The data come from the RNA Mapping Database (RMDB), library RFM100. Chemical mapping of a 177-nucleotide RNA with 2A3 and DMS. The 2A3 profile rests on 2,614 reads.
RNA sequence: GGGAACGACUCGAGUAGAGUCGAAAACAUAUCAACCCGCCAAGAAGCUCCCAGAGCCGAGCGGCUUGGAUUAGGGCGGGAUCUCUCAUCAGUCACCAUAGUAACUCAGGUAGCGCGGCAACGUCCACUAGUGACUCAGGUUCGCCUGAGUCACUAGAAAAGAAACAACAACAACAAC
Reactivity to 2A3 in 0.01 (KOAc 150mM, MgCl2 10mM, bicine 150mM(pH8.5), 24C), signal-to-noise 3, nucleotides 027 to 126: c030a040u150a040u130c020a040a110c000c000c020g000c010c010a120a040g100a070a030g100c040u070c000c000c060a060g010a020g130c060c050g060a020g040c120g030g000c000u030u070g030g010a020u070u160a120g020g010g010c000g000g010g000a000u030c010u000c000u000c000a070u020c020a070g040u040c010a020c000c000a030u040a090g140u100a040a040c000u000c010a010g010g040u050a020g050c010g010c000g080g000c000a020a050c050g050u060c050c000a030
Reactivity to DMS in 0.01 (KOAc 150mM, MgCl2 10mM, bicine 150mM(pH8.5), 24C), signal-to-noise 2, nucleotides 027 to 126: c110a070u010a110u020c060a100a140c000c000c000g030c090c070a070a130g000a130a060g020c060u000c000c040c040a160g030a110g010c000c170g000a020g050c080g000g030c000u000u000g020g020a100u000u050a110g020g000g000c050g000g020g000a080u070c020u010c010u000c080a060u090c020a110g000u000c020a010c040c030a000u000a120g030u010a070a100c060u000c080a050g020g010u000a050g000c020g000c030g000g000c010a120a070c070g000u000c010c040a180